[RMDB]
RNA sequence: GGGAACGACUCGAGUAGAGUCGAAAAGAGGGCCUAAGAGCAGUGGGAAUGGGAACAUGGAGGAAAGCCUAUCCUGUUUGUUUCCUCCUCCAGAAACAGAGGUGGAAGCUUGGUCCGGUGUUUCCCACUCUAACGCUAUAUUCGUAUAGCGUUAGAGAAAAGAAACAACAACAACAAC
Reactivity to DMS in 0.01 (KOAc 150mM, MgCl2 10mM, bicine 150mM(pH8.5), 24C), signal-to-noise 9, nucleotides 027 to 126: g010a090g010g010g010c010c010u020a080a090g020a170g010c050a050g010u020g010g010g010a090a060u010g000g000g010a050a060c090a100u020g010g010a080g010g010a080a110a110g000c040c020u010a070u010c020c010u000g000u010u010u000g010u000u010u000c010c000u000c010c010u000c010c070a120g010a140a080a080c300a110g000a030g000g010u000g000g000a040a030g000c020u000u000g010g020u000c010c010g010g020u010g010u010u000u000c000c000c010a280
Reactivity to 2A3 in 0.01 (KOAc 150mM, MgCl2 10mM, bicine 150mM(pH8.5), 24C), signal-to-noise 9, nucleotides 027 to 126: g140a030g000g010g010c020c040u110a140a030g050a010g060c050a020g020u140g060g050g050a120a140u100g020g000g020a060a070c060a120u170g120g040a090g060g100a120a040a020g040c000c010u020a030u050c000c010u030g070u060u080u060g020u010u020u010c000c000u000c000c000u000c010c020a090g190a070a120a030c070a020g010a000g020g010u030g010g010a020a010g000c010u030u050g000g000u010c010c010g010g020u080g040u010u020u000c010c000c000a010